Structure probing data (DMS and 2A3) for a 177-nucleotide construct. Conditions: 150 mM KOAc, 10 mM MgCl2 and 150 mM bicine (pH 8.5), 24 C.
[RMDB]
RNA sequence: GGGAACGACUCGAGUAGAGUCGAAAAUCACAGGUCGUGAUAUGAUUCAAUUAGCUUCCGACUCAUUCAUCCAAAUACCGAGUCGCCAAAAUUCAAACUAGACUCGUUAAAUGAAUGAAUGAUGCGGUCUAAGCUUCAGGUUCGCCUGAAGCUUAGAAAAAGAAACAACAACAACAAC
Reactivity to DMS in 0.01 (KOAc 150mM, MgCl2 10mM, bicine 150mM(pH8.5), 24C), signal-to-noise 4, nucleotides 027 to 126: u010c010a020c020a170g020g010u030c110g030u000g000a070u000a040u010g010a180u020u020c090a080a100u010u010a080g020c170u020u020c010c010g000a050c030u000c010a010u000u000c010a000u000c030c000a000a020a270u000a010c080c010g000a000g020u010c000g020c270c200a030a040a110a130u050u060c270a040a090a130c270u010a080g000a000c000u000c000g010u000u000a010a020a230u000g000a030a000u010g000a020a000u000g030a010u020g020c010g000g000
Reactivity to 2A3 in 0.01 (KOAc 150mM, MgCl2 10mM, bicine 150mM(pH8.5), 24C), signal-to-noise 5, nucleotides 027 to 126: u030c030a020c050a090g120g220u140c070g060u060g030a030u010a110u150g160a070u100u120c120a120a160u130u090a110g070c040u100u020c030c020g140a200c030u000c000a000u000u000c000a000u000c020c010a000a010a000u000a010c030c000g010a000g000u000c010g010c020c020a090a100a040a020u210u190c070a060a040a060c040u090a040g000a010c000u000c000g000u020u030a010a000a020u010g010a020a000u000g000a000a000u010g020a000u090g010c000g000g000